[RMDB]
RNA sequence: GGGAACGACUCGAGUAGAGUCGAAAAGAUAUGGAUCGAACUACAGCUUCCCAGGACGACGAAGUCGGAAACGACAGAGUCCUGAACAGCUGCGAUCCUAAGUCAAAGGGUGACUUCGGUCACCCAACUCCAAGUAGAUGUUCGCAUCUACUUGGAGAAAAGAAACAACAACAACAAC
Reactivity to DMS in 0.01 (KOAc 150mM, MgCl2 10mM, bicine 150mM(pH8.5), 24C), signal-to-noise 4, nucleotides 027 to 126: g000a040u010a300u010g010g000a010u000c000g000a050a060c100u020a300c040a010g000c010u000u000c240c150c010a020g000g000a000c000g000a130c280g020a080a150g000u000c000g000g000a060a090a160c000g000a010c000a040g000a200g000u000c000c000u010g000a050a070c220a030g000c010u000g000c000g000a010u000c000c010u000a020a080g000u010c030a050a100a110g000g010g020u000g010a010c000u000u010c170g030g000u000c000a000c000c000c000a010a020
Reactivity to 2A3 in 0.01 (KOAc 150mM, MgCl2 10mM, bicine 150mM(pH8.5), 24C), signal-to-noise 4, nucleotides 027 to 126: g010a030u070a030u160g000g000a000u010c020g010a090a070c100u180a070c300a000g010c000u090u080c060c100c000a000g000g010a000c030g040a050c060g080a140a040g010u010c000g020g050a080a080a040c000g000a000c020a030g050a000g020u000c000c000u020g010a080a030c030a090g000c000u010g000c000g000a000u020c000c000u030a120a020g060u040c050a060a100a110g000g000g000u010g000a000c000u080u140c300g080g000u000c010a000c000c000c000a000a010
Source: RMDB library TTRDEL, as collected in RNAgym. An RNA of 177 nucleotides, treated with DMS and 2A3 and read out base by base. Values cover nucleotides 27 to 126. For 2A3, 10,190 sequencing reads were counted. For DMS, 4,103 sequencing reads were counted. For 2A3 the reverse transcriptase was SuperScript II with manganese.